RNA sequence: GGGAACGACUCGAGUAGAGUCGAAAAAUUGUGCGGUCACUGAGAGAGGAGAACCUGUCUGAGAGAGCUUACCGCUUUUCAUAGUGGCUCUCUGAGAGACUCUGAGGCUCCUCUCGUUCCCAACCAAAGGAAUAUGGUGUUUCGACACCAUAUUCCUAAAAGAAACAACAACAACAAC
Reactivity to 2A3 in 0.01 (KOAc 150mM, MgCl2 10mM, bicine 150mM(pH8.5), 24C), signal-to-noise 1, nucleotides 027 to 126: a000u090u080g030u030g000c030g060g050u110c010a030c080u120g030a030g010a020g000a000g120g000a010g000a150a200c010c020u020g070u050c030u030g080a020g010a010g000a010g060c050u060u060a030c040c060g090c130u070u100u100u120c170a180u150a100g060u080g070g010c000u000c010u000c000u040g000a080g000a000g000a060c040u030c090u220g060a070g030g000c000u010c000c000u040c010u000c000g000u000u000c000c000c000a000a020c020c020a070a100
Reactivity to DMS in 0.01 (KOAc 150mM, MgCl2 10mM, bicine 150mM(pH8.5), 24C), signal-to-noise 2, nucleotides 027 to 126: a090u010u000g000u000g020c030g020g010u000c050a060c150u020g000a180g000a030g000a030g010g010a020g010a070a120c020c030u010g040u000c000u000g010a020g020a040g000a020g030c070u000u020a020c030c040g000c060u000u010u000u010c170a090u000a040g020u000g010g000c000u000c000u010c000u000g000a090g010a060g000a070c080u000c210u020g000a100g020g010c010u000c000c000u000c000u000c000g000u000u000c000c010c000a150a120c190c090a040a090
Overview: Chemical mapping of a 177-nucleotide RNA with 2A3 and DMS. For 2A3 the reverse transcriptase was SuperScript II with manganese. For 2A3, 1,005 sequencing reads were counted. DMS adducts were read by reverse transcription with MarathonRT.